[RMDB]
RNA sequence: GGGAACGACUCGAGUAGAGUCGAAAAGAACCAUUUAAAGUCGCAAAAUUAGUUACUGACUUGAAGACAGAACUGGUCAAGGCUCAAGGCUUGGAGAACCAGACUUGGUUAUUGGACUCAAUAAAUGUCACUCCCAAGACUUCGGUCUUGGGAGUGAAAAAGAAACAACAACAACAAC
Reactivity to 2A3 in 0.01 (KOAc 150mM, MgCl2 10mM, bicine 150mM(pH8.5), 24C), signal-to-noise 2, nucleotides 027 to 126: g000a020a000c000c000a020u030u000u100a300a300a000g000u020c050g000c300a000a000a070a200u170u010a060g150u000u030a110c070u020g060a010c000u040u210g060a120a020g000a050c000a030g170a070a000c010u030g000g030u030c070a080a060g000g020c060u170c300a160a200g230g000c070u080u120g000g000a070g020a040a030c000c000a000g030a040c040u070u090g050g000u020u030a040u110u060g020g000a020c020u020c010a030a000u070a030a070a000u150g010
Reactivity to DMS in 0.01 (KOAc 150mM, MgCl2 10mM, bicine 150mM(pH8.5), 24C), signal-to-noise 1, nucleotides 027 to 126: g000a160a210c010c000a090u000u030u040a020a090a100g030u000c000g080c110a030a130a210a110u000u050a030g000u050u000a160c050u000g010a030c020u000u000g010a080a160g010a190c130a110g010a030a130c010u000g000g060u020c010a050a050g000g000c000u060c100a110a140g000g000c010u000u020g050g010a160g050a210a040c000c000a080g000a000c030u000u000g000g000u000u020a040u000u000g000g000a100c030u000c040a010a120u020a070a140a100u110g000

Annotation
The data come from the RNA Mapping Database (RMDB), library OK1LIB. This 177-nucleotide RNA was probed chemically with 2A3 and DMS. For 2A3, 633 sequencing reads were counted. 2A3 is a SHAPE reagent: it acylates the 2'-hydroxyl of flexible nucleotides of all four kinds. For DMS, 1,141 sequencing reads were counted.